This 177-nucleotide RNA was probed chemically with DMS and 2A3.

[RMDB]
RNA sequence: GGGAACGACUCGAGUAGAGUCGAAAAGCACAACUUUGCAGGGCAAGCCUAUUGGUAUGUUCUUCCCUUAUGACAUCGAACUUGUCACAGGAAAGCAAAAUAUUCUCCUGCGCAAGUAUGGCCGUGGCGUGUAUAUUGUGUUCGCACAAUAUACACGAAAAGAAACAACAACAACAAC
Reactivity to DMS in 0.01 (KOAc 150mM, MgCl2 10mM, bicine 150mM(pH8.5), 24C), signal-to-noise 7, nucleotides 027 to 126: g020c050a090c130a080a090c070u010u000u000g020c060a070g010g010g010c110a060a300g000c060c040u000a110u010u000g010g020u000a070u000g000u000u000c070u000u000c010c010c020u000u000a080u010g010a030c040a030u010c180g010a110a080c070u000u000g010u000c020a040c140a020g000g000a020a030a070g020c250a070a060a090a070u000a090u000u000c080u000c010c000u000g010c060g010c080a010a020g000u000a080u010g010g020c030c040g010u000g010g020
Reactivity to 2A3 in 0.01 (KOAc 150mM, MgCl2 10mM, bicine 150mM(pH8.5), 24C), signal-to-noise 9, nucleotides 027 to 126: g020c010a020c020a120a140c070u120u130u140g010c030a030g010g030g000c040a060a040g030c000c010u120a210u110u190g020g010u070a070u070g020u020u030c000u030u030c010c010c000u010u080a170u060g030a020c010a040u070c070g060a030a060c020u030u030g060u120c030a000c000a040g010g030a040a030a020g050c120a120a050a100a070u170a120u070u060c070u010c010c000u010g000c010g000c010a000a010g010u020a070u080g050g000c050c020g070u050g070g040
The DMS profile rests on 8,904 reads.